Chemical mapping of a 177-nucleotide RNA with DMS and 2A3. The data come from the RNA Mapping Database (RMDB), library TTRDES. Reactivities are given for positions 27 through 126.

[RMDB]
RNA sequence: GGGAACGACUCGAGUAGAGUCGAAAAGAUAUGGAUUGCGAAUAAGCGAUAAGCUCGUGUCGGAAACGACAUAGAGCUUUUGACGCUUAAACAAUCCUAAGUCAAAACUAGGCCUUCGGGCCUAGAAUCUAGAGUCAUACUUCGGUAUGACUCUAGAAAAAGAAACAACAACAACAAC
Reactivity to DMS in 0.01 (KOAc 150mM, MgCl2 10mM, bicine 150mM(pH8.5), 24C), signal-to-noise 3, nucleotides 027 to 126: g000a040u010a260u000g000g000a000u010u000g010c080g000a120a300u020a050a010g040c000g000a140u000a030a010g010c000u000c020g030u000g020u000c000g000g000a060a020a120c010g020a000c000a010u000a070g000a010g040c000u000u000u000u000g020a200c130g030c000u000u000a050a190a090c000a000a000u000c000c000u000a020a120g010u010c010a090a050a140a220c000u000a000g000g000c000c010u000u030c300g030g010g020c000c010u000a000g010a080a110
Reactivity to 2A3 in 0.01 (KOAc 150mM, MgCl2 10mM, bicine 150mM(pH8.5), 24C), signal-to-noise 2, nucleotides 027 to 126: g000a010u060a000u080g030g000a000u030u040g040c160g030a260a250u130a130a010g020c090g100a100u040a280a000g000c000u020c010g010u030g010u000c000g030g000a040a020a030c010g000a000c010a020u030a090g000a000g000c000u000u040u010u020g000a000c000g010c000u000u060a070a040a010c020a020a000u000c000c000u000a060a010g030u010c030a060a040a180a300c020u010a010g000g030c000c030u060u150c300g090g020g000c000c000u020a000g010a000a040